[RMDB]
About this RNA: Conditions: 150 mM KOAc, 10 mM MgCl2 and 150 mM bicine (pH 8.5), 24 C. This 177-nucleotide RNA was probed chemically with DMS and 2A3. DMS adducts were read by reverse transcription with MarathonRT. It was measured as part of the RMDB library TTRINS. For 2A3 the reverse transcriptase was SuperScript II with manganese. For 2A3, 10,695 sequencing reads were counted.
RNA sequence: GGGAACGACUCGAGUAGAGUCGAAAAGAUAUGGAACCUAAGCUCUUUGAUCAGGUAUGUACAAGGACCUAUAUCGGAAACGAUAUAGAGAAUUGUACAUACCUGGGAGAGUAUGGUUCCUAAGUCACUCUUAGUGUAUGUUCGCAUACACUAAGAGAAAAGAAACAACAACAACAAC
Reactivity to DMS in 0.01 (KOAc 150mM, MgCl2 10mM, bicine 150mM(pH8.5), 24C), signal-to-noise 4, nucleotides 027 to 126: g000a070u010a300u000g010g010a010a020c000c000u000a130a250g010c000u010c000u000u010u000g010a160u010c000a010g000g020u000a000u000g010u000a010c000a030a000g010g000a300c110c000u000a010u010a000u000c000g010g000a140a100a180c010g020a010u000a000u000a010g010a020g000a260a250u000u010g000u000a000c000a000u000a000c000c000u000g010g000g000a010g000a020g020u010a300u010g000g000u020u000c000c000u000a020a070g000u000c040a230
Reactivity to 2A3 in 0.01 (KOAc 150mM, MgCl2 10mM, bicine 150mM(pH8.5), 24C), signal-to-noise 3, nucleotides 027 to 126: g010a000u120a080u250g000g000a000a020c010c000u090a300a200g040c010u020c040u200u300u170g170a270u270c000a000g000g010u000a000u010g000u010a000c000a000a020g000g020a020c000c000u000a000u000a010u020c020g020g010a060a060a080c010g010a010u000a000u000a020g020a000g000a010a010u000u000g000u000a000c000a000u000a000c000c000u000g000g010g000a000g000a000g010u060a050u160g000g000u000u000c000c000u010a060a020g030u020c020a030